An RNA of 177 nucleotides, treated with 2A3 and DMS and read out base by base. The RNA was probed in 150 mM KOAc, 10 mM MgCl2 and 150 mM bicine (pH 8.5) at 24 C. Values cover nucleotides 27 to 126.

RNA sequence: GGGAACGACUCGAGUAGAGUCGAAAAUUAUUGAGCGUAGAUGUCUCUGUCACGAUACGAGUAAGUGACUCUCGUGUACUACUGGCGAAUGAGACAGAGACAUUAUUUGCUCGUGCCAGUCAAUAAAGGAUUCCUUCUUGUUCGCAAGAAGGAAUCCAAAAGAAACAACAACAACAAC
Reactivity to 2A3 in 0.01 (KOAc 150mM, MgCl2 10mM, bicine 150mM(pH8.5), 24C), signal-to-noise 1, nucleotides 027 to 126: u210u240a030u060u220g040a000g000c070g000u040a000g040a040u010g000u010c000u000c010u040g030u050c000a000c080g050a010u020a040c010g020a020g020u070a200a090g090u070g290a060c020u040c040u040c030g050u070g040u110a100c080u040a010c010u080g190g000c000g040a150a100u200g010a100g010a010c000a000g010a010g000a000c000a000u000u060a000u020u030u060g000c010u010c010g000u030g110c010c000a040g030u140c000a030a120u120a080a070a070
Reactivity to DMS in 0.01 (KOAc 150mM, MgCl2 10mM, bicine 150mM(pH8.5), 24C), signal-to-noise 1, nucleotides 027 to 126: u010u020a060u000u000g000a010g000c010g020u030a040g000a030u000g000u000c000u000c000u000g000u030c000a090c060g000a080u010a100c030g000a050g020u000a040a100g000u000g010a070c030u000c210u000c110g040u010g000u000a050c110u000a010c040u000g000g000c000g000a110a100u010g010a150g020a030c010a010g000a000g000a000c010a010u000u000a030u000u010u000g000c000u000c010g010u030g000c060c000a130g000u000c100a030a070u000a040a100a100